[RMDB]
RNA sequence: GGGAACGACUCGAGUAGAGUCGAAAAGGUAGCAGAGAAGAGACUAGGCUUCAGACUAGAUAGUAUCACACUACCGGUACAUAGUAGAGACAUACAUAGAUGUGUAUGACACAUCAGAGCUGCCAUGAUCAUAGCGCAUAUUCGUAUGCGCUAUGAUAAAAGAAACAACAACAACAAC
Reactivity to DMS in 0.01 (KOAc 150mM, MgCl2 10mM, bicine 150mM(pH8.5), 24C), signal-to-noise 8, nucleotides 027 to 126: g010g020u000a020g010c080a120g000a140g010a110a110g020a150g010a120c040u000a030g010g010c060u010u010c180a140g010a080c030u000a030g000a110u000a070g000u000a090u000c060a100c190a200c030u000a020c040c030g020g010u010a080c130a080u000a060g010u000a040g000a080g000a100c100a050u010a030c080a080u010a100g010a030u010g010u000g000u010a120u010g000a090c030a010c030a030u000c020a060g000a120g000c030u000g000c020c020a120u000g000
Reactivity to 2A3 in 0.01 (KOAc 150mM, MgCl2 10mM, bicine 150mM(pH8.5), 24C), signal-to-noise 5, nucleotides 027 to 126: g000g000u020a000g000c070a020g050a010g020a220a020g060a010g030a080c040u020a030g040g060c020u140u110c080a040g030a080c010u020a020g020a070u060a060g050u030a030u060c020a010c010a010c120u060a030c030c000g000g030u050a020c030a040u130a020g050u040a020g020a010g010a080c010a060u060a020c020a020u090a060g080a070u070g040u000g030u050a170u300g070a030c010a000c000a040u020c020a000g010a010g050c020u020g010c020c010a040u110g020
Record summary:
Structure probing data (DMS and 2A3) for a 177-nucleotide construct. As a SHAPE reagent, 2A3 marks flexible, mostly unpaired nucleotides at the ribose 2'-OH. DMS adducts were read by reverse transcription with MarathonRT. Reactivities are rounded to 0.1 and cut off at 0 and 3. For 2A3 the reverse transcriptase was SuperScript II with manganese.